Conditions: 150 mM KOAc, 10 mM MgCl2 and 150 mM bicine (pH 8.5), 24 C. An RNA of 177 nucleotides, treated with DMS and 2A3 and read out base by base. For DMS the reverse transcriptase was MarathonRT.

RNA sequence: GGGAACGACUCGAGUAGAGUCGAAAAUUUGAAGAAAUGAGACCAGCAGGGGCAUCCGGGCUGGUACCCGGACUAUCUGCGUGAUCCCUGGUGACUUGAUACAGUCGCUGCACACGACUAUUUCAGGCUUGUAUAGCCAUUUCGAUGGCUAUACAAGAAAAGAAACAACAACAACAAC
Reactivity to DMS in 0.01 (KOAc 150mM, MgCl2 10mM, bicine 150mM(pH8.5), 24C), signal-to-noise 7, nucleotides 027 to 126: u020u010u020g000a130a080g000a080a070a030u010g000a120g000a090c060c040a100g000c020a040g010g000g000g010c160a230u010c000c000g020g000g020c060u000g010g010u040a050c000c000c000g000g000a030c100u000a100u030c020u010g000c030g010u010g010a080u000c020c010c000u000g020g010u000g000a150c020u000u010g000a050u000a060c140a030g000u000c010g010c040u020g010c200a080c200a110c020g000a040c020u010a100u000u010u000c010a030g000g000
Reactivity to 2A3 in 0.01 (KOAc 150mM, MgCl2 10mM, bicine 150mM(pH8.5), 24C), signal-to-noise 9, nucleotides 027 to 126: u100u050u100g090a090a060g090a050a090a060u180g020a080g040a050c020c010a010g020c010a000g020g020g010g010c040a040u020c010c000g000g030g000c060u170g090g000u070a040c000c000c000g000g000a010c010u110a100u120c010u020g010c010g040u050g020a080u110c000c010c000u020g030g030u030g020a040c010u050u030g010a020u050a080c050a010g010u010c010g010c060u130g040c040a030c000a010c040g040a010c030u040a080u040u060u020c020a010g060g030